The data come from the RNA Mapping Database (RMDB), library M2RFPK.
This 207-nucleotide RNA was probed chemically with DMS and 2A3.
For DMS, 11,367 sequencing reads were counted.
Values cover nucleotides 27 to 156.

[RMDB]
RNA sequence: GGGAACGACUCGAGUAGAGUCGAAAAGAGCGAUUAGACAAAGGGGUAGAGCUACAUAUUAGAUAGCUGUAUAAUCGUUCAAGUUACAUCAAAACAUCUUCAAUAUUCAUUACUUACUUUCCUUUCUGCCAGAGUACGGUAUUCGUACCGUACUCAAUGUAAACUGUAUAUUCGUAUACAGUUUACAAAAAGAAACAACAACAACAAC
Reactivity to DMS in 0.01 (KOAc 150mM, MgCl2 10mM, bicine 150mM(pH8.5), 24C), signal-to-noise 4, nucleotides 027 to 156: g030a050g020c030g010a080u010u000a050g010a100c060a060a080a080g000g000g050g020u000a090g010a060g010c010u000a040c010a140u000a240u010u010a130g000a190u000a020g020c020u000g030u000a060u000a040a020u010c030g020u000u000c050a070a090g000u000u000a080c060a090u000c060a060a080a080a080c050a080u010c050u010u000c050a060a100u000a100u000u000c050a080u000u000a070c030u000u000a140c060u000u000u000c010c030u000u000u010c030u010g010c090c070a180g010a030g020u000a010c010g010g000u000a030u000u010c300g020u000a020c000c000g000u000a000c000u000c000a010a050
Reactivity to 2A3 in 0.01 (KOAc 150mM, MgCl2 10mM, bicine 150mM(pH8.5), 24C), signal-to-noise 9, nucleotides 027 to 156: g000a000g000c000g000a000u010u020a020g030a080c050a040a110a030g050g030g020g030u060a030g020a000g060c000u010a010c010a070u270a150u180u150a090g170a270u010a010g020c010u010g020u040a020u010a010a000u010c010g000u010u010c010a020a010g030u050u110a070c060a090u160c060a060a100a070a060c030a090u080c060u230u090c080a110a110u090a170u200u140c050a070u080u140a060c030u070u040a030c000u030u070u070c010c000u010u060u070c020u040g060c030c050a050g000a000g000u000a000c000g000g000u010a010u000u060c130g030u010a000c000c000g000u000a000c000u000c000a000a000